[RMDB]
RNA sequence: GGGAACGACUCGAGUAGAGUCGAAAAAUGGAAUCGGUGGUGUACGAUGUCAUACUCGAAGGGCUGUUCUUUUACUCGGGAUUCGCGUUUUUCUACAACAUGGCGAGAAACGGAAAGAUGCUCGGAACCAACACGAUGAUACGGUUUAUCAAUAGGGGAAAUGCACUACUUUCGAGUAGUGCAUUUCAAAAGAAACAACAACAACAAC
Reactivity to 2A3 in 0.01 (KOAc 150mM, MgCl2 10mM, bicine 150mM(pH8.5), 24C), signal-to-noise 5, nucleotides 027 to 156: a000u130g030g050a040a040u060c010g040g000u020g030g010u010g010u040a020c010g010a030u040g110u140c020a030u070a160c030u020c070g070a080a070g060g070g030c090u100g080u150u080c040u060u130u050u080a050c030u020c000g000g010g040a050u060u030c020g000c000g110u000u030u010u020u000c020u080a060c000a170a040c050a150u130g120g010c080g000a010g010a030a020a000c020g020g040a020a070a030g100a020u040g000c010u000c000g010g020a010a010c030c000a020a040c130a010c120g030a030u060g010a010u030a110c050g010g090u040u080u040a100u100c100a130a080u080a140g020g000g030
Reactivity to DMS in 0.01 (KOAc 150mM, MgCl2 10mM, bicine 150mM(pH8.5), 24C), signal-to-noise 3, nucleotides 027 to 156: a060u000g010g010a100a060u000c040g030g030u000g030g020u010g020u010a150c060g010a070u000g000u000c040a090u000a090c070u000c010g020a130a160g020g010g030c000u000g020u000u000c040u000u000u000u000a090c050u000c050g000g000g010a200u010u010c040g030c040g030u000u000u000u020u000c050u010a110c070a080a120c080a300u000g010g020c060g050a090g010a030a130a160c090g000g010a060a050a080g020a090u000g010c000u010c030g010g010a080a070c060c030a050a080c080a110c060g010a160u000g000a130u010a090c000g010g000u000u000u000a120u010c060a030a140u010a090g010g000g020